[RMDB]
RNA sequence: GGGAACGACUCGAGUAGAGUCGAAAAUACACUUCGGUGUAACAUAUUCCUAAGUCCUCGAUAAGCGAAGCCAGCCAUCGAUCUGUGUCGGAAACGACACAGGGAGGCUGGGUUUCGCUUUUGACGAGGAUAUGGAGACCCCGCUUUUCGAAGCGAAAUUGCAGAAACAAUUCGUUGUUUCUGCAAUAAAAGAAACAACAACAACAAC
Reactivity to 2A3 in 0.01 (KOAc 150mM, MgCl2 10mM, bicine 150mM(pH8.5), 24C), signal-to-noise 3, nucleotides 027 to 156: u040a010c020a000c010u060u100c300g170g010u030g000u010a060a000c030a050u200a130u110u100c010c000u030a080a040g040u000c000c000u010c010g050a060u010a060a010g020c000g000a010a000g040c000c020a020g000c030c020a190u300c080g020a030u000c000u000g000u000g000u000c000g030g020a080a100a090c010g000a000c000a000c010a000g000g010g000a020g000g010c000u010g000g010g000u010u010u020c000g000c000u010u000u010u020g010a010c010g000a000g000g000a000u010a000u010g000g000a000g020a000c000c010c010c010g000c010u120u020u050u090c180g140a030a010g030c060g020a300a190
Reactivity to DMS in 0.01 (KOAc 150mM, MgCl2 10mM, bicine 150mM(pH8.5), 24C), signal-to-noise 2, nucleotides 027 to 156: u000a020c010a010c000u000u000c290g060g000u000g000u000a050a140c110a200u000a070u010u000c010c010u000a140a250g030u000c000c000u000c010g000a220u010a020a050g000c000g000a000a050g000c000c030a050g020c000c000a280u000c170g000a040u010c000u000g030u010g040u000c000g010g010a130a140a300c020g000a020c020a000c000a020g000g020g010a000g040g080c010u020g020g020g010u000u000u000c010g010c000u000u000u000u000g010a190c100g020a030g000g030a000u000a000u000g000g010a110g000a070c050c010c030c010g020c050u000u000u000u000c170g010a090a020g020c050g000a050a070